Chemical mapping of a 207-nucleotide RNA with 2A3 and DMS.
The data come from the RNA Mapping Database (RMDB), library M2RFPK.
The 2A3 profile rests on 843 reads.
For DMS, 2,530 sequencing reads were counted.
The reactions ran in a buffer of 150 mM KOAc, 10 mM MgCl2 and 150 mM bicine (pH 8.5), at 24 C.
RNA sequence: GGGAACGACUCGAGUAGAGUCGAAAAAGUUCGCGCUUCCGUGAAACGCGAAAAUCGGACGGUGGCUGCAAGUCGCCUCGCAAAACCGCGGCAAGUGGAGUUAGCGAGAGGAGGCUGGGUUUUGGCUAGAACACACGGUACUUCGGUACCGUGUGAAUGAUACCUGUGUGUUCGCACACAGGUAUCAAAAAGAAACAACAACAACAAC
Reactivity to 2A3 in 0.01 (KOAc 150mM, MgCl2 10mM, bicine 150mM(pH8.5), 24C), signal-to-noise 1, nucleotides 027 to 156: a000g060u020u030c010g010c000g000c040u110u090c080c050g000u070g110a120a160a010c000g000c020g030a040a010a000a070u110c060g040g030a030c050g040g000u040g010g000c040u130g050c080a090a030g010u030c010g010c000c000u000c000g000c000a030a030a000a030c020c010g010c010g100g030c140a120a030g000u070g020g010a070g000u080u120a010g010c040g020a000g000a000g050g050a010g020g000c040u040g010g100g000u010u070u070u050g020g000c040u040a040g060a200a020c000a010c010a010c030g000g040u000a000c000u050u040c240g110g000u000a000c000c010g020u010g000u000g000a000a000
Reactivity to DMS in 0.01 (KOAc 150mM, MgCl2 10mM, bicine 150mM(pH8.5), 24C), signal-to-noise 1, nucleotides 027 to 156: a040g010u010u010c010g000c000g060c000u000u010c050c150g020u000g030a050a020a070c000g030c000g000a010a000a070a110u000c090g010g020a140c030g030g040u020g010g000c020u010g030c060a050a080g030u000c020g020c000c000u000c030g030c010a050a070a140a140c020c030g000c010g040g000c080a040a180g010u020g010g010a180g010u000u010a230g020c050g020a140g020a150g000g020a040g010g040c020u010g040g020g020u000u000u000u040g020g000c080u000a130g010a100a190c020a010c000a030c010g010g020u000a010c000u000u010c300g040g000u010a010c000c000g040u000g010u000g000a040a020